[RMDB]
This 177-nucleotide RNA was probed chemically with 2A3 and DMS.

RNA sequence: GGGAACGACUCGAGUAGAGUCGAAAACACGAAUGUUGGCUAAUCCUGGUCGGACAUCAGGAGGUUAGUGCAGUGGCAUAAGCCACCUUGGCGCUAAUAGAUACUAAUCGUAGCAUAGCUGAAUAAACAUCACUACCACCUUCGGGUGGUAGUGAUGAAAAGAAACAACAACAACAAC
Reactivity to 2A3 in 0.01 (KOAc 150mM, MgCl2 10mM, bicine 150mM(pH8.5), 24C), signal-to-noise 2, nucleotides 027 to 126: c130a000c000g090a090a050u100g000u080u280g060g000c000u000a080a080u000c000c000u000g060g000u000c050g110g000a080c030a070u000c000a000g000g040a030g020g040u000u000a000g000u000g000c070a000g000u000g050g000c040a150u120a300a050g010c000c000a010c000c010u130u220g300g000c000g000c000u000a040a040u030a100g010a010u090a070c040u100a110a040u150c070g030u020a020g000c050a020u060a010g000c010u110g100a050a000u070a100a070a000
Reactivity to DMS in 0.01 (KOAc 150mM, MgCl2 10mM, bicine 150mM(pH8.5), 24C), signal-to-noise 2, nucleotides 027 to 126: c000a050c300g050a180a190u000g010u000u120g030g000c000u010a020a020u000c010c000u020g000g040u010c220g010g000a180c040a120u020c020a020g030g000a040g030g000u000u000a020g000u000g000c010a160g000u110g040g020c020a230u100a130a150g000c020c000a010c030c210u060u020g000g000c020g000c030u000a020a040u000a000g000a090u000a000c040u010a060a080u010c050g020u060a060g000c080a130u000a100g010c040u000g000a160a130u030a080a080a150

It was measured as part of the RMDB library OK1LIB. Conditions: 150 mM KOAc, 10 mM MgCl2 and 150 mM bicine (pH 8.5), 24 C. For DMS, 1,722 sequencing reads were counted.